An RNA of 177 nucleotides, treated with 2A3 and DMS and read out base by base. The reactions ran in a buffer of 150 mM KOAc, 10 mM MgCl2 and 150 mM bicine (pH 8.5), at 24 C. For 2A3 the reverse transcriptase was SuperScript II with manganese. The 2A3 profile rests on 1,483 reads.

[RMDB]
RNA sequence: GGGAACGACUCGAGUAGAGUCGAAAAACAGAAAAAAGUUUCCAUCGAAAAAAUAUUUGAAAAUAUUGGGCCCAGCGCCGUGUAUCCGUCUAUUUCGCCUGGGGUCGUGAUUGCGUCACCAUCGCAACAUGAUUAAUGAGUUCGCUCAUUAAUCAUGAAAAGAAACAACAACAACAAC
Reactivity to 2A3 in 0.01 (KOAc 150mM, MgCl2 10mM, bicine 150mM(pH8.5), 24C), signal-to-noise 2, nucleotides 027 to 126: a010c010a020g140a040a180a020a040a010a080g010u030u040u040c040c040a070u100c060g040a020a150a120a020a150a060u110a140u140u210u280g070a120a170a040a010u090a090u080u110g030g000g010c000c040c000a030g020c010g000c070c020g000u030g000u020a030u060c020c060g030u000c030u070a080u040u110u020c000g010c020c010u030g000g050g000g050u000c030g020u020g020a080u000u080g000c010g010u030c000a040c100c010a060u040c010g000c010a010a040
Reactivity to DMS in 0.01 (KOAc 150mM, MgCl2 10mM, bicine 150mM(pH8.5), 24C), signal-to-noise 3, nucleotides 027 to 126: a080c090a290g020a030a010a060a100a100a170g000u000u000u000c020c040a170u010c060g000a010a030a110a150a060a040u000a010u000u000u010g000a120a060a050a040u000a040u000u010g010g000g010c030c000c010a050g020c110g020c040c050g030u010g010u000a040u010c080c060g010u010c090u000a080u000u000u000c090g010c040c010u000g010g010g030g010u000c030g010u010g010a120u000u000g000c010g010u000c060a110c070c100a060u010c040g030c070a040a080